[RMDB]
RNA sequence: GGGAACGACUCGAGUAGAGUCGAAAAGAGUGUGAAAUUGAUAUUUUAAUAAUGUGCACUUUUGAUUAUUUAAAUCUGUGACUAGAAGUAUAAGUGAAGACAUUCAGAAGUAUUAUAAAAAGUGAACACUUCUGUUCGGAUUCGUCCGAACAGAAGUAAAAGAAACAACAACAACAAC
Reactivity to 2A3 in 0.01 (KOAc 150mM, MgCl2 10mM, bicine 150mM(pH8.5), 24C), signal-to-noise 1, nucleotides 027 to 126: g000a000g020u210g000u070g100a060a100a220u160u060g000a010u040a120u050u050u150u050a070a020u130a150a050u040g030u150g090c000a010c000u010u000u050u040g060a050u000u120a130u120u070u120a170a140a030u020c090u030g120u140g030a040c030u060a020g030a210a000g090u090a130u250a090a090g000u090g130a010a010g050a010c000a060u070u070c000a000g000a060a010g050u120a030u130u080a120u130a280a170a000a000a000g060u030g020a120a000c000
Reactivity to DMS in 0.01 (KOAc 150mM, MgCl2 10mM, bicine 150mM(pH8.5), 24C), signal-to-noise 1, nucleotides 027 to 126: g010a020g000u000g020u000g000a080a140a080u060u000g000a100u010a080u030u010u000u000a060a140u020a010a010u010g020u000g030c020a010c000u000u000u030u000g000a090u000u090a060u030u040u010a060a060a030u000c000u020g000u040g030a160c060u030a070g030a140a170g000u010a090u020a090a030g000u010g000a140a140g000a090c050a090u000u000c140a200g010a070a010g010u000a010u010u000a140u000a000a000a000a000a000g000u000g010a050a060c030